[RMDB]
RNA sequence: GGGAACGACUCGAGUAGAGUCGAAAAUAAUUGCGUUAUCUGUUCAGCCACUGGCAAGUAAGUAUUACCUUUUACCAGCGCUGGAACUUGCUCGGUGGGCACACCACUCAAGCGAGAGAGUGGGGCACUAGCUACCCGUAUUCGUACGGGUAGCUAGAAAAGAAACAACAACAACAAC
Reactivity to DMS in 0.01 (KOAc 150mM, MgCl2 10mM, bicine 150mM(pH8.5), 24C), signal-to-noise 2, nucleotides 027 to 126: u000a060a070u040u010g040c120g040u000u000a070u000c090u010g000u000u000c100a200g020c010c020a040c010u010g000g000c050a020a050g000u000a050a080g020u010a090u020u010a030c150c060u000u040u000u000a120c050c020a080g020c280g020c180u000g000g050a060a130c010u000u000g000c010u010c080g040g020u000g010g060g010c080a100c150a120c010c020a010c000u000c000a050a080g060c160g010a120g000a050g010a010g020u000g000g030g030g000c180a160
Reactivity to 2A3 in 0.01 (KOAc 150mM, MgCl2 10mM, bicine 150mM(pH8.5), 24C), signal-to-noise 1, nucleotides 027 to 126: u010a020a080u180u090g070c020g040u040u140a130u120c100u060g050u020u040c030a110g050c000c000a020c010u000g020g010c000a020a030g000u040a070a000g020u020a220u150u300a090c010c000u070u110u070u100a010c030c010a020g090c030g070c130u100g010g010a030a030c010u000u040g000c030u070c100g050g000u020g030g080g000c000a020c010a020c040c020a000c010u010c040a190a100g030c110g070a030g010a000g020a000g150u000g000g000g060g020c040a040